[RMDB]
An RNA of 207 nucleotides, treated with 2A3 and read out base by base.

RNA sequence: GGGAACGACUCGAGUAGAGUCGAAAAGCACGUGAAUUUCAUGCUGGGCGAAGAUGAACUAUGUGGAAGAUGACUUAUAAGGAGCUUUUAUGUUACAUCUUGGCAGUUAACACAGUCUAACUGAUGCACGUGAAUUUCAUGCUGGGCGAAGAUGAACGCAUCAGUUUUGGUUCGCCAAAACUGAUGCAAAAGAAACAACAACAACAAC
Reactivity to 2A3 in 0.01 (KOAc 150mM, MgCl2 10mM, bicine 150mM(pH8.5), 24C), signal-to-noise 1, nucleotides 027 to 156: g040c000a000c020g020u090g020a030a150u040u040u070c020a050u040g000c000u070g030g010g070c060g020a000a000g010a030u050g000a070a070c040u070a070u100g030u080g090g020a010a010g010a050u040g030a040c000u060u090a020u050a300a080g090g000a020g000c040u090u000u060u000a050u020g070u030u050a080c020a000u000c000u010u020g110g010c000a040g000u100u080a060a000c110a000c000a040g040u030c080u100a000a090c050u020g010a070u050g030c010a000c050g050u080g000a000a080u030u090u040c020a010u110g010c030u050g010g140g000c000g060a070a010g080a100u120g120a040a010c030
Conditions: 150 mM KOAc, 10 mM MgCl2 and 150 mM bicine (pH 8.5), 24 C.